Notes:
Conditions: 150 mM KOAc, 10 mM MgCl2 and 150 mM bicine (pH 8.5), 24 C. Chemical mapping of a 177-nucleotide RNA with DMS and 2A3. High DMS reactivity at an A or C suggests that its Watson-Crick edge is free. For DMS the reverse transcriptase was MarathonRT. It was measured as part of the RMDB library OK1LIB. For 2A3, 1,650 sequencing reads were counted.

RNA sequence: GGGAACGACUCGAGUAGAGUCGAAAACGUAGCGGGCAAUGACGGCGUCGAACCAGCCGCAGCGCCGGCGCCGGCCGGUGGUCACACCGAACUCGCGGCCAGUCUUGGACAGGUAUUCGCCGUGUUCUCUCCAAAAGGGGUUCGCCCCUUUUGGAGAAAAAGAAACAACAACAACAAC
Reactivity to DMS in 0.01 (KOAc 150mM, MgCl2 10mM, bicine 150mM(pH8.5), 24C), signal-to-noise 2, nucleotides 027 to 126: c080g030u000a050g060c030g040g000g000c050a040a110u040g000a040c060g000g000c000g060u000c110g030a140a150c180c020a120g050c000c010g000c060a050g040c100g000c120c000g010g000c000g030c070c060g000g000c040c020g000g000u000g020g010u010c140a130c050a000c060c010g000a130a180c000u010c010g000c030g000g000c020c000a050g000u000c040u010u010g000g000a060c070a110g000g010u050a090u000u010c060g000c000c030g000u020g040u000u000c040
Reactivity to 2A3 in 0.01 (KOAc 150mM, MgCl2 10mM, bicine 150mM(pH8.5), 24C), signal-to-noise 2, nucleotides 027 to 126: c100g000u080a010g000c020g000g010g000c060a110a160u120g040a080c020g000g000c000g030u060c040g020a100a080c060c020a070g030c000c010g020c040a010g040c020g020c000c010g030g010c010g020c030c020g080g000c000c000g000g020u050g020g110u190c090a030c010a020c150c010g020a030a030c020u010c060g040c020g040g000c030c020a010g040u020c040u120u120g030g020a010c030a030g010g010u000a080u060u130c020g000c040c010g010u030g020u080u020c060